This 177-nucleotide RNA was probed chemically with DMS. DMS (dimethyl sulfate) methylates the pairing face of unpaired adenines and cytosines. Source: RMDB library OK2TST, as collected in RNAgym. Conditions: 150 mM KOAc, 10 mM MgCl2 and 150 mM bicine (pH 8.5), 24 C.
[RMDB]
RNA sequence: GGGAACGACUCGAGUAGAGUCGAAAAUGACCCUGUUGAAAAUGAAGACAUACAUAGGGUUUAUGCUGUAUUGGGUAAAAUAGUGGCAAAUGCUAUGUUAAAGUGUGUCUGUUUAGGUGAUGCCAUGCCAUCUGCAACCUUUCGAGGUUGCAGAUGGAAAAGAAACAACAACAACAAC
Reactivity to DMS in 0.01 (KOAc 150mM, MgCl2 10mM, bicine 150mM(pH8.5), 24C), signal-to-noise 2, nucleotides 027 to 126: u020g010a190c110c010c010u000g010u000u010g000a070a100a050a110u020g000a140a050g000a050c020a040u000a060c010a030u000a030g000g010g030u000u000u000a060u010g020c030u020g020u020a050u010u000g020g030g020u020a050a050a030a010u000a020g000u010g010g020c010a020a030a030u000g000c010u000a020u000g000u000u010a040a080a160g000u000g020u010g000u000c010u010g000u000u010u000a080g020g020u000g000a120u010g040c020c060a130u010g020

Description:
For DMS, 1,788 sequencing reads were counted.